[RMDB]
RNA sequence: GGGAACGACUCGAGUAGAGUCGAAAAAAUGUUAUCGGCUAUAGCCGAUGAUACCAAAUAUUAAUUCAAAGCUGUGACACAAGCUGACGACGCGAAGGAAAUGCGACGUAUGUACAACAAAACAGCCAUAUGCAAUUAUAUAUUAAUCAUUUCCUUGCGUUAAUCAGAGGUUCGCCUCUGAUUAACGAAAAGAAACAACAACAACAAC
Reactivity to 2A3 in 0.01 (KOAc 150mM, MgCl2 10mM, bicine 150mM(pH8.5), 24C), signal-to-noise 4, nucleotides 027 to 156: a000a000u160g000u020u000a000u000c000g020g000c040u100a070u190a300g010c020c000g000a000u000g000a010u040a070c030c020a020a050a010u160a060u050u120a050a070u090u070c020a080a060a010g000c020u020g050u050g130a050c020a000c040a220a080g020c020u060g090a030c030g020a010c010g010c040g050a090a090g050g050a080a070a010u120g000c010g030a040c030g070u000a050u100g050u030a070c030a150a040c010a010a230a030a070c020a030g030c040c020a080u120a050u230g000c010a010a010u070u020a040u060a040u010a020u190u150a120a060u060c010a010u020u030u010c000c000u010u070g030
Reactivity to DMS in 0.01 (KOAc 150mM, MgCl2 10mM, bicine 150mM(pH8.5), 24C), signal-to-noise 1, nucleotides 027 to 156: a090a120u010g080u020u030a010u010c000g010g030c000u000a190u010a170g020c020c020g020a000u020g010a050u010a200c010c020a110a090a090u000a010u000u000a020a110u000u010c000a110a100a110g000c000u000g020u000g040a110c190a130c090a110a100g010c000u010g010a210c030g000a060c020g040c010g030a170a210g050g020a110a010a140u000g010c000g000a110c030g070u000a040u000g040u000a080c060a070a190c020a060a060a120a050c020a150g000c020c120a090u000a100u000g010c080a080a060u000u000a070u000a090u000a160u010u000a160a060u010c030a050u000u010u000c000c000u000u000g000